Source: RMDB library OK2TST, as collected in RNAgym. The record gives the reactivity of an RNA of 177 nucleotides to 2A3 and DMS. The 2A3 profile rests on 2,475 reads. In probing experiments dimethyl sulfate is read out at A N1 and C N3, which are open when not base-paired. The reactions ran in a buffer of 150 mM KOAc, 10 mM MgCl2 and 150 mM bicine (pH 8.5), at 24 C. For 2A3 the reverse transcriptase was SuperScript II with manganese. For DMS, 2,711 sequencing reads were counted. Values are in units of 0.01, from 0 to 300, in steps of 10.
RNA sequence: GGGAACGACUCGAGUAGAGUCGAAAAUUACUGGUUCGGCGAGCCAAUCGACACCACAGAGUUUAUGGGGCAGCAAGCCGACGAUAACGCCGCACGCAGGGUGCGCGCGCGUGCCGCCGCCGCUAUCCUUCCCUUUAUCGUUCGCGAUAAAGGGAAGAAAAGAAACAACAACAACAAC
Reactivity to 2A3 in 0.01 (KOAc 150mM, MgCl2 10mM, bicine 150mM(pH8.5), 24C), signal-to-noise 2, nucleotides 027 to 126: u070u050a060c060u060g010g000u100u070c040g030g000c030g000a010g030c020c000a010a050u040c040g040a030c020a010c050c020a040c040a060g160a010g060u010u050u170a150u150g000g000g040g000c020a030g010c030a050a000g020c020c030g020a000c020g000a020u050a120a020c050g020c030c000g030c000a000c020g070c070a090g170g250g000u050g010c080g020c000g010c000g010c020g040u040g040c000c010g010c000c010g030c030c010g010c060u060a070u130c010
Reactivity to DMS in 0.01 (KOAc 150mM, MgCl2 10mM, bicine 150mM(pH8.5), 24C), signal-to-noise 3, nucleotides 027 to 126: u010u010a110c100u000g010g020u000u010c040g040g020c060g030a180g000c020c070a060a140u010c070g010a100c060a090c040c030a090c090a180g020a090g010u000u000u010a050u000g000g020g010g010c070a080g010c090a130a140g020c030c020g000a070c050g010a050u010a080a110c040g020c030c050g020c040a010c030g000c110a150g010g010g030u000g010c040g010c110g000c020g000c030g000u000g010c040c070g010c040c010g010c010c070g040c060u000a070u010c040